Source: RMDB library PDB130, as collected in RNAgym. This 207-nucleotide RNA was probed chemically with 2A3. The RNA was probed in 150 mM KOAc, 10 mM MgCl2 and 150 mM bicine (pH 8.5) at 24 C.
RNA sequence: GGGAACGACUCGAGUAGAGUCGAAAAUGAAACUUUGGGUCAAUUUGAUCAUGGCAAAAUUAGAGACUGUUACUUUAGGUAACAUCGGGAAAGAUGGAAAACAAACUCUGGUCCUCAAUCCGCGUGGGGUAAAUCCCACUAACGGCGUUGCCUCGCUCUGGUUAUUAGACUUCGGUCUAAUAACCAGAAAAGAAACAACAACAACAAC
Reactivity to 2A3 in 0.01 (KOAc 150mM, MgCl2 10mM, bicine 150mM(pH8.5), 24C), signal-to-noise 2, nucleotides 027 to 156: u040g000a060a040a030c030u060u040u060g090g030g000u030c020a040a180u070u050u270g010a050u080c040a040u070g050g000c010a040a070a050a100u150u080a120g000a010g030a090c050u010g000u040u100a030c030u110u170u180a090g050g010u000a000a000c000a050u070c040g020g050g000a000a060a070g030a030u080g000g050a040a070a020a000c040a000a080a040c030u050c040u060g100g020u030c000c000u100c030a050a120u000c000c000g000c000g010u010g010g010g020g010u030a020a070a070u070c000c000c000a010c000u010a070a000c000g010g000c040g040u020u020g000c020c010u030c030g050c030u000

High 2A3 reactivity points to a flexible backbone, as in loops and unpaired stretches.